The record gives the reactivity of an RNA of 207 nucleotides to DMS and 2A3. 2A3 adducts were read by reverse transcription with SuperScript II with manganese. Conditions: 150 mM KOAc, 10 mM MgCl2 and 150 mM bicine (pH 8.5), 24 C. The DMS profile rests on 2,152 reads.
RNA sequence: GGGAACGACUCGAGUAGAGUCGAAAACUCCGCGCUCAAGAGUUGUAUCCACCGGGUAGUUCCCAACUCCGGCUGGUGUGAAGAAGGAGCCGUUCCACGCAGGACGCCAACAAGAAGAAGCCGAAUCAACUUCAGGUGGCCGCGCACGAAGUGGCGCGUACAUAGCGACCUUCGGGUCGCUAUGUACAAAAGAAACAACAACAACAAC
Reactivity to DMS in 0.01 (KOAc 150mM, MgCl2 10mM, bicine 150mM(pH8.5), 24C), signal-to-noise 2, nucleotides 027 to 156: c000u000c010c030g040c040g020c040u020c100a190a080g020a030g020u000u030g010u000a130u000c020c020a080c080c000g040g020g000u010a030g010u010u000c010c020c020a170a190c120u000c020c050g020g020c020u000g020g090u000g000u000g010a160a100g020a190a130g030g020a070g020c110c010g040u000u000c000c020a180c120g040c070a190g020g000a140c000g020c010c070a160a180c120a110a290g000a220a200g020a100a100g000c030c050g010a140a300u000c060a200a100c010u020u000c020a220g010g020u000g000g020c010c040g040c010g010c040a240c070g010a170a160g010u000g020g000c030g020c100
Reactivity to 2A3 in 0.01 (KOAc 150mM, MgCl2 10mM, bicine 150mM(pH8.5), 24C), signal-to-noise 1, nucleotides 027 to 156: c010u020c000c030g000c010g020c010u150c120a230a050g010a000g020u040u040g070u180a220u030c030c010a000c070c000g000g030g000u030a010g000u040u020c010c000c000a030a040c060u100c030c070g070g020c110u080g000g040u050g050u030g110a030a200g040a080a040g050g030a030g010c000c000g030u070u000c010c020a050c040g050c050a050g030g020a030c000g000c030c000a060a050c030a130a120g090a080a000g060a010a000g080c050c080g070a030a080u090c050a050a040c000u080u010c020a010g000g050u000g030g010c020c000g000c000g010c020a040c120g130a160a040g010u170g150g010c000g020c020